[RMDB]
RNA sequence: GGGAACGACUCGAGUAGAGUCGAAAAGAUAUGGAUCGUCCCUGGGAGGUCCCUUGGAAAUUGAGACUAUCGGAAACGAUAGUCUCAAUUUCCAAGAAGACCGAGGAUCAGGAGCGAUCCUAAGUCACAGACCAUAUUACUUCGGUAAUAUGGUCUGAAAAGAAACAACAACAACAAC
Reactivity to DMS in 0.01 (KOAc 150mM, MgCl2 10mM, bicine 150mM(pH8.5), 24C), signal-to-noise 1, nucleotides 027 to 126: g000a050u000a300u010g000g010a000u000c000g020u010c020c010c000u000g000g000g010a000g050g000u000c000c080c010u040u000g000g000a020a020a020u000u000g000a020g000a030c000u000a010u000c000g010g010a130a100a220c010g010a020u010a010g010u020c000u000c000a010a010u000u000u000c000c000a000a000g000a120a220g000a010c000c020g000a060g020g020a090u010c020a010g020g000a020g020c020g000a010u000c000c020u010a000a040g010u010c020a280